[RMDB]
Chemical mapping of a 177-nucleotide RNA with DMS and 2A3. The DMS profile rests on 2,440 reads. The reactions ran in a buffer of 150 mM KOAc, 10 mM MgCl2 and 150 mM bicine (pH 8.5), at 24 C.
RNA sequence: GGGAACGACUCGAGUAGAGUCGAAAACACCACCGUCAUCAGAUCGGCGCGACUGCUGCUGACGGGGACGCCGAUCGGAAGAUUGUACUCCGUUUUCGUGAUCGGAUAAAACAGCGCGAUGCCUCGCCCUAGGACGUACCUUCGGGUACGUCCUAGGAAAAGAAACAACAACAACAAC
Reactivity to DMS in 0.01 (KOAc 150mM, MgCl2 10mM, bicine 150mM(pH8.5), 24C), signal-to-noise 2, nucleotides 027 to 126: c180a160c040c050a150c160c030g030u000c060a040u000c040a060g000a000u000c010g050g000c000g000c000g000a300c060u030g010c050u030g000c140u020g010a260c020g020g000g000g000a190c130g040c000c000g000a000u010c000g000g000a050a000g000a040u000u000g000u000a060c030u000c020c000g020u000u020u000u000c010g040u050g000a050u020c020g030g030a030u040a110a030a000a070c090a040g000c000g000c010g000a050u010g000c040c000u010c010g040c160
Reactivity to 2A3 in 0.01 (KOAc 150mM, MgCl2 10mM, bicine 150mM(pH8.5), 24C), signal-to-noise 4, nucleotides 027 to 126: c060a050c000c000a030c010c030g040u040c010a070u000c010a070g010a040u040c020g020g020c010g000c000g080a070c020u040g020c000u040g060c070u120g080a160c010g000g000g000g010a020c020g000c000c000g000a000u000c010g000g010a030a000g020a030u050u180g030u070a080c070u010c040c020g020u030u030u090u140c070g050u070g080a110u050c010g000g040a030u140a050a080a010a010c050a030g050c050g000c000g080a030u080g050c000c020u030c020g030c000

It was measured as part of the RMDB library OK1LIB.
2A3 is a SHAPE reagent: it acylates the 2'-hydroxyl of flexible nucleotides of all four kinds.
For DMS the reverse transcriptase was MarathonRT.